RNA sequence: GGGAACGACUCGAGUAGAGUCGAAAAUCGUGAGAUGUGGUGCCUCACGCGCUCGAGGCGUCCGUGGUCAGAGAGACCACUGACGCAAAAACUCGAGCGCAAAUAAAGCGCAUUACAUGCAGAAUAAAUGCACCCUAAUGUUCGCAUUAGGGUGCAUAAAAGAAACAACAACAACAAC
Reactivity to DMS in 0.01 (KOAc 150mM, MgCl2 10mM, bicine 150mM(pH8.5), 24C), signal-to-noise 1, nucleotides 027 to 126: u010c020g000u000g000a100g010a040u020g030u000g000g030u000g020c010c000u000c120a100c200g000c000g000c030u000c000g000a020g010g000c000g000u000c000c110g060u000g020g000u000c000a050g020a160g040a260g030a000c010c000a000c000u000g000a000c000g000c010a000a000a070a100a300c000u000c000g000a000g050c000g000c000a010a100a010u010a100a020a030g040c300g000c000a030u000u000a000c000a100u000g000c130a120g010a130a060u020a070a190
Reactivity to 2A3 in 0.01 (KOAc 150mM, MgCl2 10mM, bicine 150mM(pH8.5), 24C), signal-to-noise 2, nucleotides 027 to 126: u100c050g000u050g080a220g050a080u110g000u020g020g020u000g000c000c020u050c030a090c090g000c000g000c000u000c000g000a000g010g000c010g000u000c010c020g000u000g010g000u000c010a050g060a030g030a030g000a300c000c000a000c000u000g000a010c000g000c000a070a060a150a000a020c010u000c000g000a000g000c000g000c000a000a010a000u100a020a070a000g040c010g010c020a000u000u000a020c020a000u070g190c030a020g080a240a030u240a130a120

The record gives the reactivity of an RNA of 177 nucleotides to DMS and 2A3. The reactions ran in a buffer of 150 mM KOAc, 10 mM MgCl2 and 150 mM bicine (pH 8.5), at 24 C. Values are in units of 0.01, from 0 to 300, in steps of 10. For 2A3, 1,040 sequencing reads were counted.